[RMDB]
RNA sequence: GGGAACGACUCGAGUAGAGUCGAAAAGACGAGGCCAUGUUAAUGAACUACAGAUGUAAUAUAGGGAGCCGCUGCGUCUGCCGACGCCCGGUGUGUGCUUAAACUUUAACCGUCCUCGCCCCGGCUAUCUAUUUGCGGUGGAUCGGAGCCAGAACCAGUAGUUGCAAGUAUUCGUACUUGCAACUACAAAAGAAACAACAACAACAAC
Reactivity to 2A3 in 0.01 (KOAc 150mM, MgCl2 10mM, bicine 150mM(pH8.5), 24C), signal-to-noise 1, nucleotides 027 to 156: g040a020c030g000a010g000g000c000c030a030u140g030u000u160a260a130u130g040a060a130c060u070a010c150a190g060a170u180g080u100a160a070u170a070u150a300g020g040g080a020g110c010c010g030c050u070g000c000g000u010c000u090g280c180c140g010a010c010g030c020c000c010g000g000u070g040u060g000u020g040c040u010u160a100a110a090c000u040u040u090a030a010c000c000g090u090c020c000u000c030g050c000c020c070c000g010g000c000u030a080u150c040u030a080u170u120u140g060c120g030g000u060g060g010a010u050c050g070g000a010g000c030c000a030g060a100a090c050c010a020